[RMDB]
Record summary
This 177-nucleotide RNA was probed chemically with DMS and 2A3. The RNA was probed in 150 mM KOAc, 10 mM MgCl2 and 150 mM bicine (pH 8.5) at 24 C. In probing experiments dimethyl sulfate is read out at A N1 and C N3, which are open when not base-paired. DMS adducts were read by reverse transcription with MarathonRT.
RNA sequence: GGGAACGACUCGAGUAGAGUCGAAAAGAUAUGGAUGUACGCAGCCGAUAAGCGUUUCGGAAACGAGGACGCUUUUGACGGCUGAAACAUCCUAAGUCAAAGCGAUAAACCUUCGGGUUUAUCGCAACUCACAUUGUGCGUUCGCGCACAAUGUGAGAAAAGAAACAACAACAACAAC
Reactivity to DMS in 0.01 (KOAc 150mM, MgCl2 10mM, bicine 150mM(pH8.5), 24C), signal-to-noise 2, nucleotides 027 to 126: g000a030u000a300u000g020g020a010u000g030u000a080c300g000c000a000g020c000c000g000a100u000a000a010g030c010g050u000u000u000c000g000g000a110a090a130c000g000a030g000g020a000c000g020c000u000u000u000u010g000a150c140g000g060c000u010g000a020a010a000c000a000u010c000c000u000a010a100g030u000c050a080a200a130g000c010g000a000u000a010a000a000c000c000u000u010c210g010g010g030u000u000u000a010u000c000g000c000a020a010
Reactivity to 2A3 in 0.01 (KOAc 150mM, MgCl2 10mM, bicine 150mM(pH8.5), 24C), signal-to-noise 1, nucleotides 027 to 126: g010a000u060a020u140g000g000a000u000g010u020a060c290g000c010a000g010c040c000g060a080u030a100a000g010c020g010u000u030u040c040g010g000a080a070a050c020g020a030g090g030a010c000g000c000u110u020u000u020g070a030c010g000g000c010u000g030a000a000a020c000a000u030c000c020u030a100a000g030u010c110a090a080a080g000c000g000a000u000a000a010a000c000c000u010u060c300g090g000g000u010u000u010a000u000c010g000c000a000a010